The record gives the reactivity of an RNA of 207 nucleotides to 2A3 and DMS.
The reactions ran in a buffer of 150 mM KOAc, 10 mM MgCl2 and 150 mM bicine (pH 8.5), at 24 C.
Reactivities are given for positions 27 through 156.
2A3 adducts were read by reverse transcription with SuperScript II with manganese.
High DMS reactivity at an A or C suggests that its Watson-Crick edge is free.
RNA sequence: GGGAACGACUCGAGUAGAGUCGAAAAGAUUCGGCGGCCCUGUCAUGAGGCGGAAACGAAGGCACGUACCCCUUCGAAUGGCGUCGGGGAGUCAGCGGCUAUAUAUGCGCCUAAUGCUGGCAUCCGGGAGAACCCUCAUCCUUCGGGAUGAGGGUAAGACUAUCUUACUCUUCGGAGUAAGAUAGUCAAAAGAAACAACAACAACAAC
Reactivity to 2A3 in 0.01 (KOAc 150mM, MgCl2 10mM, bicine 150mM(pH8.5), 24C), signal-to-noise 3, nucleotides 027 to 156: g040a070u120u080c030g010g000c030g030g050c000c020c000u050g060u130c010a030u090g040a030g050g000c070g040g030a040a120a060c070g030a100a100g060g000c080a050c120g060u110a060c000c000c000c030u000u020c020g120a220a180u190g110g060c040g010u020c010g000g000g000g000a070g120u140c060a000g010c020g010g000c040u020a010u000a010u010a030u300g130c020g020c010c000u040a100a030u100g000c010u010g020g010c010a050u030c000c010g020g060g000a110g090a030a040c000c000c000u000c000a000u000c000c010u070u080c100g020g000g000a000u000g000a000g010g000g000u000a000a000
Reactivity to DMS in 0.01 (KOAc 150mM, MgCl2 10mM, bicine 150mM(pH8.5), 24C), signal-to-noise 1, nucleotides 027 to 156: g000a190u010u000c040g050g000c040g040g040c010c010c110u000g040u000c080a080u000g010a070g000g050c050g000g030a080a100a110c050g010a120a130g010g010c020a100c060g010u010a200c050c000c010c000u030u000c030g000a210a250u010g020g030c100g010u000c110g010g020g000g000a060g020u000c110a000g020c030g040g000c020u010a080u010a110u010a130u000g030c050g030c030c040u000a070a070u020g060c040u040g000g000c000a080u000c010c000g000g000g010a160g000a030a070c000c000c000u000c000a020u000c010c010u000u010c220g030g050g030a000u000g010a010g000g010g020u000a000a050